[RMDB]
RNA sequence: GGGAACGACUCGAGUAGAGUCGAAAAACAGCAUGGUGCGUCUAACAACACAGGGAUUAAGACGGAAAGAUGAAAUGAUUCUCUCAACAUCUUCAAUAGAUACCUUGCUAUUUUUUCUGGCAUUAUCUAUAUGUGUGAGAAUAUCCUCUAGAGAAUCCAAGUAUUCUACAUUCGUGUAGAAUACUUGAAAAGAAACAACAACAACAAC
Reactivity to 2A3 in 0.01 (KOAc 150mM, MgCl2 10mM, bicine 150mM(pH8.5), 24C), signal-to-noise 8, nucleotides 027 to 156: a000c030a010g040c020a030u060g030g000u050g030c010g010u020c030u070a070a070c070a070a020c070a050c090a160g110g020g010a080u130u100a110a030g030a020c030g020g020a090a020a010g030a020u040g020a030a030a030u070g000a010u040u010c020u000c000u010c050a040a120c000a090u000c000u100u050c030a050a100u030a130g040a020u060a050c040c040u010u030g000c010u030a160u070u140u050u020u050u070c080u070g040g000c000a010u020u050a040u110c070u060a070u020a050u200g030u010g010u030g050a020g010a020a020u040a060u110c010c010u040c040u040a020g000a000g000a030a000u000c010
Reactivity to DMS in 0.01 (KOAc 150mM, MgCl2 10mM, bicine 150mM(pH8.5), 24C), signal-to-noise 4, nucleotides 027 to 156: a050c040a110g020c030a080u010g020g030u010g000c030g010u000c030u000a110a110c090a090a050c050a090c080a080g020g010g000a140u000u010a070a120g020a090c070g000g000a070a090a060g010a080u000g000a150a140a130u010g010a070u000u000c010u000c020u000c040a050a200c030a040u000c030u020u000c040a070a060u000a070g000a040u000a020c150c100u000u000g010c010u020a010u000u010u000u020u000u000c160u030g030g040c010a030u000u000a300u000c030u000a030u000a060u000g020u000g020u000g000a130g020a100a100u000a090u000c020c020u010c060u000a090g000a090g010a050a080u010c010
The record gives the reactivity of an RNA of 207 nucleotides to 2A3 and DMS. For 2A3 the reverse transcriptase was SuperScript II with manganese.